[RMDB]
RNA sequence: GGGAACGACUCGAGUAGAGUCGAAAACUGUGUCAACUCAGAGUUGAAUGGAUUAAGGGCGGUGCAGGAUGUGCUUUGUUAAACAGAUGCUUGAAGGCAGCAUGCUCCUUAAGAGUCAUCACCACUCUCUGGUCAGGGUAUUCGUACCCUGACCAGAAAAAGAAACAACAACAACAAC
Reactivity to DMS in 0.01 (KOAc 150mM, MgCl2 10mM, bicine 150mM(pH8.5), 24C), signal-to-noise 2, nucleotides 027 to 126: c070u040g030u000g000u000c090a060a100c100u000c090a150g020a170g000u000u000g000a130a020u010g000g010a100u000u000a050a020g020g000g030c010g020g020u010g000c110a080g000g020a050u000g000u040g050c000u000u010u000g030u030u030a030a030a180c280a070g000a060u000g000c000u000u050g080a170a100g020g000c130a050g010c030a210u000g000c020u030c010c000u000u010a030a100g000a050g000u030c070a110u010c100a070c070c030a030c050u020c090
Reactivity to 2A3 in 0.01 (KOAc 150mM, MgCl2 10mM, bicine 150mM(pH8.5), 24C), signal-to-noise 2, nucleotides 027 to 126: c010u040g010u060g060u140c090a020a000c000u010c030a030g020a010g040u030u000g070a020a070u100g100g010a060u050u110a170a100g010g000g000c030g000g030u010g080c000a000g040g130a110u080g040u000g030c010u140u110u110g110u170u100a070a110a030c020a020g040a010u070g000c000u090u130g070a050a000g030g030c000a010g000c030a010u100g020c010u010c070c000u090u000a030a030g010a010g110u050c010a030u010c080a100c070c000a100c000u060c000
This 177-nucleotide RNA was probed chemically with DMS and 2A3. The data come from the RNA Mapping Database (RMDB), library OK1LIB. 2A3 is a SHAPE reagent: it acylates the 2'-hydroxyl of flexible nucleotides of all four kinds. DMS adducts were read by reverse transcription with MarathonRT. In probing experiments dimethyl sulfate is read out at A N1 and C N3, which are open when not base-paired. For 2A3, 795 sequencing reads were counted.